This 177-nucleotide RNA was probed chemically with DMS. The reactions ran in a buffer of 150 mM KOAc, 10 mM MgCl2 and 150 mM bicine (pH 8.5), at 24 C. Values cover nucleotides 27 to 126. For DMS, 971 sequencing reads were counted. Source: RMDB library RFM100, as collected in RNAgym.
RNA sequence: GGGAACGACUCGAGUAGAGUCGAAAAAGCUGCUGUCAAUCGUAGCAGCUGUGGCAUUCCACUGUGGGAAAGGAAGUGUUACACAGUUAAAUACCUCUUUCUUAUCCAAGAAGAAAGUGGGCAUGUGUUGCACGUCACCCUUCGGGGUGACGUGCAAAAAAGAAACAACAACAACAAC
Reactivity to DMS in 0.01 (KOAc 150mM, MgCl2 10mM, bicine 150mM(pH8.5), 24C), signal-to-noise 1, nucleotides 027 to 126: a000g000c000u000g000c000u000g010u040c150a090a120u160c130g000u020a050g070c010a000g000c000u000g010u010g000g040c150a300u000u040c000c000a050c010u010g000u010g010g000g000a090a040a050g000g020a010a300g000u040g000u050u000a000c020a120c000a060g020u000u040a010a110a070u000a190c000c000u000c000u000u000u000c000u000u020a020u100c230c200a140a070g010a000a000g040a000a000a000g010u000g010g000g010c250a040u000g000u000g000